[RMDB]
RNA sequence: GGGAACGACUCGAGUAGAGUCGAAAAGGACCGUGUCAGCCGGUCAGUUUUACUGGGGCGGUAUCCUCCCAAAGAGUAACGGAGGAGCGCGAAGGUGGGCUCAGCCCGGUUGGCAACCGGGUGUCGAUCAAAAUGAAUCGUUCGCGAUUCAUUUUGAAAAAGAAACAACAACAACAAC
Reactivity to 2A3 in 0.01 (KOAc 150mM, MgCl2 10mM, bicine 150mM(pH8.5), 24C), signal-to-noise 4, nucleotides 027 to 126: g070g020a010c010c010g020u030g090u100c050a020g020c030c000g020g010u020c020a010g000u020u000u060u130a070c030u030g000g000g090g020c040g030g030u100a150u050c000c000u050c010c000c010a060a140a020g170a040g030u120a080a030c040g000g000a000g000g010a020g030c020g000c010g040a060a010g020g020u060g010g010g000c020u040c070a020g000c000c010c000g000g000u030u020g040g010c010a030a030c020c000g000g000g020u020g060u060c040g030a050
Reactivity to DMS in 0.01 (KOAc 150mM, MgCl2 10mM, bicine 150mM(pH8.5), 24C), signal-to-noise 6, nucleotides 027 to 126: g010g020a040c020c010g020u000g020u030c060a060g010c060c000g020g000u000c070a040g010u010u020u010u030a040c050u010g010g000g000g010c030g020g000u020a090u020c010c010u020c000c020c150a110a120a140g020a210g010u020a110a160c300g000g000a030g010g010a020g000c020g000c030g000a300a130g000g020u020g000g000g000c070u020c100a210g000c010c000c010g010g000u000u000g000g000c030a110a170c060c030g010g000g010u010g010u010c100g000a160
Structure probing data (2A3 and DMS) for a 177-nucleotide construct.
Source: RMDB libraries RFM100 and RFMREP, as collected in RNAgym.
The 2A3 profile rests on 5,598 reads.
Conditions: 150 mM KOAc, 10 mM MgCl2 and 150 mM bicine (pH 8.5), 24 C.
For DMS the reverse transcriptase was MarathonRT.